Structure probing data (2A3) for a 207-nucleotide construct. The RNA was probed in 150 mM KOAc, 10 mM MgCl2 and 150 mM bicine (pH 8.5) at 24 C.

RNA sequence: GGGAACGACUCGAGUAGAGUCGAAAAGCCGAUGAAUUGCCGAGAAGCCUGGCUCGAAAUCGUCGACGCAUCGACGACGGUCCUGCCAUGAGACCGUAACGAGGACAUGUCGCCUCGAAUGGCGCCGUAUAACAUGAGUGGUUCGCCACUCAUGUAACUCGGAAAUGUAGUUCGCUACAUUUCCGAGAAAAGAAACAACAACAACAAC
Reactivity to 2A3 in 0.01 (KOAc 150mM, MgCl2 10mM, bicine 150mM(pH8.5), 24C), signal-to-noise 2, nucleotides 027 to 156: g030c000c020g010a030u040g040a040a230u160u170g040c020c000g060a070g110a100a010g080c050c140u120g070g010c050u040c080g040a070a050a040u000c000g000u010c000g040a080c100g030c180a110u030c000g000a000c000g000a000c000g040g000u020c080c040u030g030c020c000a040u020g040a020g010a080c040c000g000u040a000a000c010g000a000g050g000a010c040a150u150g020u300c120g020c010c000u020c010g000a000a040u010g000g000c000g030c000c020g130u130a060u040a250a030c000a000u000g000a000g000u010g030g010u020u090c040g010c060c000a000c020u000c000a000u000g000u000a020a000

For 2A3, 745 sequencing reads were counted.